[RMDB]
An RNA of 177 nucleotides, treated with DMS and read out base by base. Conditions: 150 mM KOAc, 10 mM MgCl2 and 150 mM bicine (pH 8.5), 24 C. It was measured as part of the RMDB library TTRINS.
RNA sequence: GGGAACGACUCGAGUAGAGUCGAAAAGAUAUGGACGGAAGGCCUGCAGGAAUAUUAGGCUAGCUUAGUGUCGGAAACGACAUGGGAGCUUGGACCCUAAUAUUCCUGCAGGCCUCCGUCCUAAGUCGUUUAUGAUAGAGUUCGCUCUAUCAUAAACAAAAGAAACAACAACAACAAC
Reactivity to DMS in 0.01 (KOAc 150mM, MgCl2 10mM, bicine 150mM(pH8.5), 24C), signal-to-noise 3, nucleotides 027 to 126: g000a110u010a300u000g010g000a020c010g000g000a060a090g020g010c000c000u000g040c000a030g000g000a020a000u000a010u020u000a010g000g010c030u000a010g010c010u000u010a300g010u000g010u000c010g010g000a130a090a290c010g000a020c000a020u000g010g020g010a010g010c000u000u010g040g010a090c300c010c010u000a010a010u000a000u010u000c000c010u000g000c000a000g000g010c000c000u000c000c000g000u000c000c000u000a000a100g000u000c090